[RMDB]
RNA sequence: GGGAACGACUCGAGUAGAGUCGAAAAGUGCGACUGGGGUCACAGCGGUGAUGGCGAUCUCGGACAACGUGGUUGGGCUGUACACAAGGGCAACCUGACUCUAGCCGAGUUGCAAGGCAAGCGUGCCGAUCUUGUCAUCGUUGACGAGGUGUUCGCCCUUAUCUUACUGGUUCGCCAGUAAGAUAAGAAAAGAAACAACAACAACAAC
Reactivity to DMS in 0.01 (KOAc 150mM, MgCl2 10mM, bicine 150mM(pH8.5), 24C), signal-to-noise 3, nucleotides 027 to 156: g010u010g020c060g010a070c040u010g010g010g030g010u010c030a110c040a050g000c040g020g030u000g010a090u000g010g020c050g010a030u000c010u000c020g040g010a110c050a020a080c070g030u000g040g030u000u000g010g010g000c020u000g050u000a070c100a160c200a110a180g020g010g020c010a020a010c030c000u000g000a020c010u010c070u000a140g020c010c020g020a120g020u000u000g010c050a140a140g020g020c030a060a160g010c100g030u000g010c020c010g000a020u000c010u000u000g020u010c020a070u000c100g010u000u000g010a100c040g010a040g020g000u000g000u000u000c010g010c010c040
Reactivity to 2A3 in 0.01 (KOAc 150mM, MgCl2 10mM, bicine 150mM(pH8.5), 24C), signal-to-noise 5, nucleotides 027 to 156: g090u080g030c040g010a030c040u050g030g000g030g050u050c030a010c030a070g040c030g020g030u050g010a030u060g060g020c050g020a070u060c040u010c050g030g040a100c060a130a040c120g040u080g020g020u010u020g030g020g000c010u000g020u110a100c090a020c080a160a120g070g000g000c010a010a010c000c010u010g010a010c000u000c050u080a030g070c020c000g020a020g010u040u100g040c040a050a060g010g000c010a030a050g080c100g100u090g020c010c010g030a040u050c030u020u110g010u000c000a030u040c060g020u010u040g020a040c020g000a030g040g030u050g020u030u020c060g170c010c010
Source: RMDB library OK3TST, as collected in RNAgym. Chemical mapping of a 207-nucleotide RNA with DMS and 2A3. DMS (dimethyl sulfate) methylates the pairing face of unpaired adenines and cytosines. Reactivities are given for positions 27 through 156. Conditions: 150 mM KOAc, 10 mM MgCl2 and 150 mM bicine (pH 8.5), 24 C. For DMS, 8,437 sequencing reads were counted. For 2A3 the reverse transcriptase was SuperScript II with manganese.